[RMDB]
RNA sequence: GGGAACGACUCGAGUAGAGUCGAAAAGACUUAUGUUUCGGGAUCUCUUUGUUUCUUCUUUUUUUCCCGGAGAAUAAUUUUUUAGGACCAAUUACCGUAGUUGCGACUACAACAAUUGUUGUUCAUACUCUUUAUCUCUUUUCGAAGAGAUAAAGAGAAAAGAAACAACAACAACAAC
Reactivity to 2A3 in 0.01 (KOAc 150mM, MgCl2 10mM, bicine 150mM(pH8.5), 24C), signal-to-noise 4, nucleotides 027 to 126: g010a000c020u050u020a040u140g130u020u100u030c010g010g030g030a100u020c060u010c000u100u090u060g130u150u170u070c060u100u130c030u060u130u040u040u020u070u050c000c000c000g030g020a020g020a040a020u080a040a040u070u060u040u110u150u170a090g050g020a040c030c010a060a040u120u060a120c070c100g000u020a020g010u000u060g120c120g050a030c020u020a010c010a070a010c040a100a110u050u040g010u000u010g010u000u010c000a020u060a110